[RMDB]
RNA sequence: GGGAACGACUCGAGUAGAGUCGAAAAUGAACAAGUUGACGUUUCUCAUGAGACUUCUGACGACGAGUGGGCUGCUGCAGUUGAUGAAGCGUUCCCUCUCGAUGAAGCAGAAGAUGUUACUGAAUCUACAUUCCUAAUAGUUCGCUAUUAGGAAUGUAAAAGAAACAACAACAACAAC
Reactivity to DMS in 0.01 (KOAc 150mM, MgCl2 10mM, bicine 150mM(pH8.5), 24C), signal-to-noise 5, nucleotides 027 to 126: u000g020a120a110c150a110a090g020u010u000g020a080c220g010u000u000u000c040u010c070a120u000g010a130g000a130c020u000u010c010u000g010a130c130g010a100c050g010a020g020u000g000g010g020c300u020g000c020u000g000c020a050g000u020u000g010a180u000g010a040a000g010c010g000u000u000c000c000c000u010c030u000c020g010a050u000g000a100a140g010c000a060g010a030a010g010a090u000g010u000u020a080c160u010g010a110a140u020c080u010
Reactivity to 2A3 in 0.01 (KOAc 150mM, MgCl2 10mM, bicine 150mM(pH8.5), 24C), signal-to-noise 6, nucleotides 027 to 126: u150g020a040a010c040a130a070g020u020u030g040a020c030g010u000u020u020c030u020c020a040u080g040a020g030a060c000u020u000c000u020g060a080c020g020a010c010g000a000g010u020g000g000g010c030u070g000c010u020g000c020a040g010u200u160g140a180u040g020a050a010g000c000g020u120u130c010c010c000u000c000u000c000g070a110u100g030a050a010g000c010a000g000a000a000g030a030u080g070u080u050a090c070u040g030a040a050u000c020u030